The record gives the reactivity of an RNA of 177 nucleotides to DMS and 2A3. The reactions ran in a buffer of 150 mM KOAc, 10 mM MgCl2 and 150 mM bicine (pH 8.5), at 24 C.

[RMDB]
RNA sequence: GGGAACGACUCGAGUAGAGUCGAAAAUUGUCUGCAGCUCACCUCGCAGGAAUCACUUCGGUGAGCGAGGGCUGUUCGACUCCACGCGGAAAUGUCGAAGGAUGAUGUCCACCACGCCGUGCUGUCAUCCAGACAAUGUUUUCGAACAUUGUCUGGAAAAAGAAACAACAACAACAAC
Reactivity to DMS in 0.01 (KOAc 150mM, MgCl2 10mM, bicine 150mM(pH8.5), 24C), signal-to-noise 5, nucleotides 027 to 126: u010u010g010u000c000u000g020c080a300g010c000u010c050a150c030c010u020c120g010c140a130g000g010a120a150u010c130a110c040u000u020c090g000g010u000g010a010g010c000g000a110g010g000g000c010u000g000u000u000c140g000a020c010u010c010c040a060c050g000c020g010g000a030a080a060u030g000u000c020g010a070a050g010g010a040u000g000a040u000g010u000c060c020a090c050c020a080c100g000c060c040g030u000g010c030u000g020u000c090a120
Reactivity to 2A3 in 0.01 (KOAc 150mM, MgCl2 10mM, bicine 150mM(pH8.5), 24C), signal-to-noise 8, nucleotides 027 to 126: u100u040g010u010c000u030g050c110a000g000c010u020c040a050c010c010u050c070g040c040a050g100g160a070a150u180c060a050c120u050u060c090g030g000u010g010a000g000c010g000a040g000g020g000c010u020g010u010u020c020g000a010c010u000c020c000a030c030g040c010g000g090a090a090a050u180g030u020c020g010a040a020g040g000a020u080g020a030u100g080u030c010c000a010c010c000a040c050g030c030c020g040u040g040c020u030g020u060c010a040